[RMDB]
RNA sequence: GGGAACGACUCGAGUAGAGUCGAAAAACUGUUCGAAGGAGUGGUAGAAGGAGUAGGACUGUUCGAAGGAGUGGUAGAAGGAGUAACCGACGGGGCAACGUAUUCGUAAUACUUAAUGGUUAGAAUGAUUUCCCUACAUAUUCGUAUGUAGGGAAAUAAAAGAAACAACAACAACAAC
Reactivity to DMS in 0.01 (KOAc 150mM, MgCl2 10mM, bicine 150mM(pH8.5), 24C), signal-to-noise 9, nucleotides 027 to 126: a080c080u000g010u010u000c070g010a120a090g010g010a070g030u000g000g020u000a060g010a090a070g000g000a080g020u010a080g000g010a090c080u000g010u000u000c110g010a110a080g010g000a060g020u000g010g020u000a060g010a090a080g010g010a070g010u010a070a090c050c040g010a090c110g000g000g000g010c090a040a050c100g010u010a050u000u000c120g020u000a090a060u000a050c050u000u000a060a100u010g010g010u000u000a060g000a070a070u000g000
Reactivity to 2A3 in 0.01 (KOAc 150mM, MgCl2 10mM, bicine 150mM(pH8.5), 24C), signal-to-noise 3, nucleotides 027 to 126: a000c040u040g050u100u040c030g050a060a010g080g020a060g030u060g020g020u070a020g040a110a020g020g040a050g000u050a020g010g040a030c020u040g030u090u040c050g040a030a020g040g030a040g030u050g010g050u070a040g030a040a010g040g020a020g000u030a030a020c030c000g010a010c030g000g000g040g020c020a030a000c030g020u030a060u030u040c040g000u050a040a100u030a090c040u080u120a040a050u110g020g030u030u040a080g070a110a070u170g040

The record gives the reactivity of an RNA of 177 nucleotides to DMS and 2A3. Conditions: 150 mM KOAc, 10 mM MgCl2 and 150 mM bicine (pH 8.5), 24 C. 2A3 adducts were read by reverse transcription with SuperScript II with manganese.